This 207-nucleotide RNA was probed chemically with 2A3 and DMS.
Conditions: 150 mM KOAc, 10 mM MgCl2 and 150 mM bicine (pH 8.5), 24 C.
Reactivities are given for positions 27 through 156.

[RMDB]
RNA sequence: GGGAACGACUCGAGUAGAGUCGAAAAGCGGCACGCUGGGAGCCGUCUGAGGCACUGCCUGCGGGACAGCCGGUACAGCAGGGGCGGCAGUCGCGCCAGCAUCCGCCGCGACGUUGGGCACUGCCGGCAGGUUGCUACCCGCAUCCUUGGCCUUCGGCUCUCAUCAUUGAUUCGUCAAUGAUGAGAGAAAAGAAACAACAACAACAAC
Reactivity to 2A3 in 0.01 (KOAc 150mM, MgCl2 10mM, bicine 150mM(pH8.5), 24C), signal-to-noise 3, nucleotides 027 to 156: g030c000g010g000c030a040c100g110c110u160g060g060g050a040g010c040c000g020u040c090u080g050a040g000g020c040a040c150u090g030c010c020u030g000c000g000g000g030a030c010a010g000c010c030g010g050u130a110c090a050g020c030a040g050g020g010g040c000g010g000c010a010g020u050c090g030c080g140c040c010a000g000c010a040u040c020c050g210c070c040g000c210g010a010c010g020u040u020g010g000g030c010a000c010u010g000c000c000g000g010c010a010g020g020u020u020g000c030u120a180c000c000c020g010c010a030u040c010c000u050u050g040g020c000c000u070u090c030g030g000
Reactivity to DMS in 0.01 (KOAc 150mM, MgCl2 10mM, bicine 150mM(pH8.5), 24C), signal-to-noise 1, nucleotides 027 to 156: g010c030g030g020c070a070c110g030c030u000g010g030g010a100g040c080c010g000u010c030u000g000a100g010g000c040a100c050u000g010c040c010u030g030c000g020g000g010a170c010a080g030c010c000g000g040u000a100c080a190g030c080a060g000g030g000g050c060g040g000c020a060g010u000c090g010c040g000c000c020a080g050c030a100u000c040c020g060c120c120g000c090g020a040c000g010u000u020g020g010g010c030a070c040u000g030c000c030g000g060c040a030g000g000u000u000g000c020u000a110c020c010c000g000c010a070u000c020c030u000u000g010g020c040c030u000u000c040g010g000